Notes: The record gives the reactivity of an RNA of 177 nucleotides to 2A3. Source: RMDB library RFM100, as collected in RNAgym.
RNA sequence: GGGAACGACUCGAGUAGAGUCGAAAAGCAGAUGCCCCGCGCUCAGGCUUUCGAUACGGCAAUCGAGCUCUUGCCGUCAGCUAACCGGCCCACGAGGGGGCGGGAAUCGUUACGAGCUUGCGCACUGGGCACUGGACGGAUUCGUCCGUCCAGUGCCAAAAGAAACAACAACAACAAC
Reactivity to 2A3 in 0.01 (KOAc 150mM, MgCl2 10mM, bicine 150mM(pH8.5), 24C), signal-to-noise 1, nucleotides 027 to 126: g090c020a030g040a120u080g020c000c000c000c000g010c000g000c050u020c000a040g040g000c000u100u030u000c030g000a000u000a020c000g000g000c000a080a010u160c120g160a060g020c120u090c020u030u000g020c000c000g010u000c000a000g000c020u010a000a060c000c000g300g000c000c030c000a040c040g210a160g110g000g000g040g020c000g020g010g000a040a000u020c030g000u140u030a060c120g020a020g000c000u040u020g040c020g000c040a000c020u040g010
Record summary
Reactivities are rounded to 0.1 and cut off at 0 and 3.